[RMDB]
This 177-nucleotide RNA was probed chemically with 2A3 and DMS. Conditions: 150 mM KOAc, 10 mM MgCl2 and 150 mM bicine (pH 8.5), 24 C. It was measured as part of the RMDB libraries RFM100 and RFMREP.
RNA sequence: GGGAACGACUCGAGUAGAGUCGAAAAUUUGGGGACAAUUGGAGCAAAUUGACUCCCUUACGGUUAGUAUGAAGGUUUGAAAGUGAAAGAUUUUUGGUACGUUUCUAGAAAGUAAAUAAAUGAAUCCCUUAGCGAUAGAGUUCGCUCUAUCGCUAAGAAAAGAAACAACAACAACAAC
Reactivity to 2A3 in 0.01 (KOAc 150mM, MgCl2 10mM, bicine 150mM(pH8.5), 24C), signal-to-noise 3, nucleotides 027 to 126: u130u080u140g000g000g000g000a000c010a020a070u020u050g100g010a190g070c040a000a050a140u040u030g020a080c060u010c000c020c030u040u040a020c040g080g000u050u040a030g020u030a090u090g090a110a030g030g070u020u140u160g070a130a100a060g040u060g050a020a140a050g050a080u050u020u070u000u070g010g000u020a050c070g000u000u050u000c010u010a060g090a100a120a000g050u170a040a040a100u120a080a080a070u190g050a030a040u040c000c000
Reactivity to DMS in 0.01 (KOAc 150mM, MgCl2 10mM, bicine 150mM(pH8.5), 24C), signal-to-noise 3, nucleotides 027 to 126: u010u010u010g010g020g000g010a080c030a050a030u000u010g020g000a070g000c080a060a050a060u010u000g020a160c110u010c000c010c020u000u000a050c120g020g000u000u020a070g010u010a040u020g010a040a100g000g000u000u020u000g000a080a060a060g010u000g000a090a050a090g000a070u000u010u010u010u000g000g020u010a060c100g000u010u010u000c030u000a100g010a090a070a070g000u020a040a040a070u020a010a040a080u030g000a070a120u010c050c040